[RMDB]
RNA sequence: GGGAACGACUCGAGUAGAGUCGAAAACGGUGGGGUGGGGGCUUUUCUGGCCUGGGGCGACCCCUCGCUCUAUGACAGCACCCUGCGCAUCCUGGAUGCGGUGUCCGCCGAGGUGGACUUCAGCUACUCCGCUCGUUUUAUUCGUAAAACGAGCGGAAAAAGAAACAACAACAACAAC
Reactivity to 2A3 in 0.01 (KOAc 150mM, MgCl2 10mM, bicine 150mM(pH8.5), 24C), signal-to-noise 1, nucleotides 027 to 126: c050g040g050u120g000g010g000g000u020g000g000g000g090g000c040u200u170u290u060c160u160g030g000c030c020u030g000g000g010g040c000g000a050c020c000c000c000u030c000g030c010u000c000u000a130u000g040a060c040a080g000c010a030c010c000c000u020g010c010g000c010a050u070c000c090u130g080g030a060u110g000c030g000g010u040g000u030c000c030g010c030c030g040a050g080g000u040g030g000a010c000u110u090c130a010g040c000u050a050c080